RNA sequence: GGGAACGACUCGAGUAGAGUCGAAAAAAGAGCUAGAGCAACUCCCACACUCAUGAGCGUCCUCAUACUGUUCUGGGCGCUUCUCACAGGUGCUUCUUUUAGUGUCUCCCAUUGGCCCAGAUCGGUACAAUGUGGUUCCGUUCGCGGAACCACAUUGAAAAGAAACAACAACAACAAC
Reactivity to 2A3 in 0.01 (KOAc 150mM, MgCl2 10mM, bicine 150mM(pH8.5), 24C), signal-to-noise 3, nucleotides 027 to 126: a000a000g130a010g000c040u080a010g000a000g090c020a010a060c030u030c010c030c000a010c000a010c020u070c010a060u110g020a000g020c050g010u030c000c030u050c000a080u050a110c030u060g040u120u000c030u030g000g000g050c000g100c000u020u000c000u020c000a110c010a010g030g000u040g020c020u050u090c000u010u100u010u070a100g030u070g050u090c010u030c000c010c010a050u050u150g040g000c000c000c000a000g020a040u050c020g000g000u040a030
Reactivity to DMS in 0.01 (KOAc 150mM, MgCl2 10mM, bicine 150mM(pH8.5), 24C), signal-to-noise 2, nucleotides 027 to 126: a030a070g000a070g000c070u030a100g030a080g000c120a180a070c060u000c000c000c000a090c120a070c030u000c070a030u040g010a100g000c000g010u000c010c000u000c030a140u000a080c110u000g000u000u010c020u010g000g000g000c000g000c070u010u000c040u000c130a080c080a130g000g020u000g010c030u000u000c110u030u000u000u000a050g000u010g000u000c060u000c030c000c010a160u030u010g010g000c010c000c070a070g010a050u000c010g000g010u040a070